[RMDB]
RNA sequence: GGGAACGACUCGAGUAGAGUCGAAAAUUAUUCAACAAAACAGGUCCGAUACCAAUUUAUUAACCCUGGAAUGAUGGAAGGCUUGGUUGGUCUUGUGCGAUUUUGAACCAACCAUCGCACAGUCGUCGCAUUAAAUAAUGUUCGCAUUAUUUAAUGCAAAAGAAACAACAACAACAAC
Reactivity to DMS in 0.01 (KOAc 150mM, MgCl2 10mM, bicine 150mM(pH8.5), 24C), signal-to-noise 6, nucleotides 027 to 126: u030u020a050u010u010c060a130a090c110a070a050a090a290c060a040g010g010u000c060c080g010a080u010a050c150c140a070a060u010u020u020a050u030u010a110a180c120c000c020u000g000g010a050a070u010g000a020u000g000g020a150a080g000g000c050u000u010g000g010u000u000g010g010u000c010u020u010g010u020g010c040g000a030u010u010u030u020g010a070a100c090c100a030a070c100c070a030u000c030g000c040a030c060a040g010u010c050g000u020c130
Reactivity to 2A3 in 0.01 (KOAc 150mM, MgCl2 10mM, bicine 150mM(pH8.5), 24C), signal-to-noise 9, nucleotides 027 to 126: u060u050a040u070u110c080a080a070c040a060a150a020a020c010a020g000g040u040c040c050g020a020u070a110c040c040a070a040u100u100u080a160u130u180a110a100c030c000c000u030g050g030a090a060u070g080a030u060g040g070a060a040g030g010c010u020u030g020g000u020u010g000g010u010c030u100u100g050u080g050c070g090a120u030u070u060u260g070a040a020c010c010a000a010c000c020a010u020c040g030c000a020c020a080g030u060c040g050u060c080